[RMDB]
RNA sequence: GGGAACGACUCGAGUAGAGUCGAAAAUGAAAAUCUGCGUCCCUCCCGAAGCUGCGCGCUCGGUCGAAGAGGACGACCACAGCCGAUAGAGGACUGCCGGUCUUCGGUCAAGGGAAAAAGAAAAAAACAAAUGAGUGUACUUCGGUACACUCAUUUGAAAAGAAACAACAACAACAAC
Reactivity to 2A3 in 0.01 (KOAc 150mM, MgCl2 10mM, bicine 150mM(pH8.5), 24C), signal-to-noise 1, nucleotides 027 to 126: u130g030a060a060a000a000u060c050u090g030c050g110u000c000c020c020u000c040c030c000g030a000a020g010c030u040g030c010g020c010g010c140u060c080g030g000u000c020g030a090a060g120a090g200g060a040c030g050a010c010c010a020c010a000g020c030c060g060a040u120a100g090a060g030g040a040c020u080g030c020c000g030g000u070c010u000u010c030g000g020u000c030a030a050g000g010g090a030a060a000a000a010g030a040a080a020a000a010a010a020
Reactivity to DMS in 0.01 (KOAc 150mM, MgCl2 10mM, bicine 150mM(pH8.5), 24C), signal-to-noise 2, nucleotides 027 to 126: u000g000a120a090a070a040u000c020u010g010c190g000u000c010c010c000u000c100c000c000g010a050a040g000c010u000g040c150g020c070g000c070u010c040g010g040u000c020g030a140a110g000a170g030g010a080c030g000a030c030c010a110c070a100g000c040c060g000a110u000a110g040a040g000g010a070c030u010g000c060c070g010g000u010c010u000u000c000g000g000u020c200a120a070g000g010g010a010a030a030a140a070g000a020a000a030a150a060a040a160
Chemical mapping of a 177-nucleotide RNA with 2A3 and DMS.
The RNA was probed in 150 mM KOAc, 10 mM MgCl2 and 150 mM bicine (pH 8.5) at 24 C.
For 2A3, 1,446 sequencing reads were counted.
High 2A3 reactivity points to a flexible backbone, as in loops and unpaired stretches.
Source: RMDB library M2PK90, as collected in RNAgym.
For DMS the reverse transcriptase was MarathonRT.